[RMDB]
RNA sequence: GGGAACGACUCGAGUAGAGUCGAAAAUGGAUCCUUUCGCGGUUGAAACUACCGAAGCCUUAGCUGCCCGAAAGGGUGACCUCCGCGACUCGCAAAACAAGGAGAGGUCUCAAAAGCUAGUGGCUCCUAGCUGCUGCUCGUGCAGUGAGUGCGACAUCCAACGAAAAAGGUUCGCCUUUUUCGUUGGAAAAGAAACAACAACAACAAC
Reactivity to 2A3 in 0.01 (KOAc 150mM, MgCl2 10mM, bicine 150mM(pH8.5), 24C), signal-to-noise 2, nucleotides 027 to 156: u110g080g050a060u040c020c000u060u090u070c030g010c050g030g030u030u030g100a120a080a040c120u080a100c060c040g110a090a000g000c000c000u050u020a020g030c010u000g010c050c000c010g100a070a050a020g000g020g010u010g000a000c000c000u000c020c020g050c010g060a060c000u100c140g050c050a060a080a070a050c060a200a020g060g000a090g010a000g050g000u030c010u000c050a110a090a000a000g000c010u020a040g090u070g060g000c000u030c000c030u020a040g010c010u010g000c010u060g030c010u020c120g150u200g020c000a000g000u030g080a030g060u100g010c000g000a000c020a040u050
Background:
The record gives the reactivity of an RNA of 207 nucleotides to 2A3. 2A3 adducts were read by reverse transcription with SuperScript II with manganese.